[RMDB]
RNA sequence: GGGAACGACUCGAGUAGAGUCGAAAACCGCUACGGGACGAAAAGACCCCGUGAACCUUUACUAUAGCUUCGCAUUGGUAUUGGAUAAUUAAUGUGUAGGAUAGGUCGGAGACAUUGAAGCAGGCACUUUGUUUAGCACCUUCGGGUGCUAAACAAAAAAAGAAACAACAACAACAAC
Reactivity to 2A3 in 0.01 (KOAc 150mM, MgCl2 10mM, bicine 150mM(pH8.5), 24C), signal-to-noise 2, nucleotides 027 to 126: c000c000g000c030u050a060c030g000g000g000a050c000g080a050a100a000a000g120a080c020c000c000c000g000u000g000a040a020c000c020u100u090u150a050c020u000a010u050a060g120c040u130u100c020g030c100a080u010u010g040g000u090a020u210u250g120g050a090u040a230a040u030u000a070a020u020g010u000g110u130a020g000g130a030u000a070g000g070u040c100g000g150a000g000a090c070a070u050u040g000a000a000g000c020a080g010g050c000a000c070
Reactivity to DMS in 0.01 (KOAc 150mM, MgCl2 10mM, bicine 150mM(pH8.5), 24C), signal-to-noise 2, nucleotides 027 to 126: c030c000g010c160u040a020c040g000g000g070a230c080g000a040a180a100a140g010a080c090c000c000c000g020u000g000a080a160c120c000u000u000u060a090c050u000a000u020a070g000c040u010u000c120g010c010a120u020u000g000g010u010a000u040u000g040g000a120u070a070a020u080u010a020a130u030g040u020g000u000a000g000g010a180u030a040g000g000u000c100g000g010a050g000a080c130a060u000u030g010a010a020g020c070a100g000g000c210a070c120